An RNA of 177 nucleotides, treated with 2A3 and read out base by base.
RNA sequence: GGGAACGACUCGAGUAGAGUCGAAAAAGACCUGGUACGCCAGGUCAAUGUACCAUGCUGGUAGCCAGUAUGAAAUAGGGCUUGCUGGUAACCAGCGUUGUGCCCCACUACUGCUACGGCAGUAGAAACGGGGACCAGGAUUCGUCCUGGUCCCCGUAAAAGAAACAACAACAACAAC
Reactivity to 2A3 in 0.01 (KOAc 150mM, MgCl2 10mM, bicine 150mM(pH8.5), 24C), signal-to-noise 2, nucleotides 027 to 126: a000g030a000c000c000u000g000g000u110a060c300g010c040c010a000g000g000u000c000a000a000u050g000u000a000c020c020a010u000g000c000u010g020g030u030a070g000c000c000a000g020u010a040u100g220a100a080a050u170a180g080g090g050c060u020u010g010c010u000g010g000u050a060a090c000c000a000g020c000g000u000u020g000u000g030c040c000c000c000a020c010u010a000c000u010g020c000u020a030c220g090g000c000a000g000u000a000g000a050a060
2A3 adducts were read by reverse transcription with SuperScript II with manganese. The data come from the RNA Mapping Database (RMDB), library RFM100. Conditions: 150 mM KOAc, 10 mM MgCl2 and 150 mM bicine (pH 8.5), 24 C.